[RMDB]
RNA sequence: GGGAACGACUCGAGUAGAGUCGAAAAUAAGGUGGUGGAAAUCACGAAGAUUGCGUUACCACCAAUAAUUAUGAGUCCUCACCGCGUUUCAUUGGAUGGAUGGAGGCGUGUAGCCUUAGGAUUAUUAGAUGGUGUUAUCCGGACCCACCAGACGCAAGUAUAGGUAGCGUUUCGACGCUACCUAUACAAAAGAAACAACAACAACAAC
Reactivity to DMS in 0.01 (KOAc 150mM, MgCl2 10mM, bicine 150mM(pH8.5), 24C), signal-to-noise 2, nucleotides 027 to 156: u010a090a100g010g000u000g020g020u000g000g000a300a080a080u000c010a150c060g000a210a150g020a110u000u000g020c100g030u020u000a070c020c030a000c050c000a030a030u000a020a080u000u000a040u010g010a080g030u000c010c020u020c050a100c030c030g020c010g010u000u030u000c080a050u000u010g020g020a220u000g000g010a070u000g000g000a070g000g000c000g090u010g030u000a270g020c050c010u040u040a060g010g000a060u000u000a040u000u000a130g000a050u000g020g000u000g030u000u000a100u000c090c020g000g010a100c030c020c000a070c050c010a190g010a080c020g020c040a060a280
Reactivity to 2A3 in 0.01 (KOAc 150mM, MgCl2 10mM, bicine 150mM(pH8.5), 24C), signal-to-noise 3, nucleotides 027 to 156: u140a060a060g040g010u020g010g000u030g030g050a060a070a040u140c060a080c170g080a160a090g060a080u050u120g060c060g050u100u090a020c000c000a000c000c010a000a020u050a010a010u060u100a040u110g060a020g050u040c010c000u070c050a040c020c060g010c040g040u040u060u040c080a090u080u090g160g020a090u050g070g010a040u060g060g010a060g000g000c000g000u130g040u110a020g020c000c010u000u070a060g040g000a050u050u020a010u120u120a140g060a190u120g020g000u050g000u050u080a060u060c040c000g030g030a010c020c000c000a010c020c000a010g020a100c030g010c100a000a100
An RNA of 207 nucleotides, treated with DMS and 2A3 and read out base by base. It was measured as part of the RMDB library OK3TST. The reactions ran in a buffer of 150 mM KOAc, 10 mM MgCl2 and 150 mM bicine (pH 8.5), at 24 C. DMS adducts were read by reverse transcription with MarathonRT.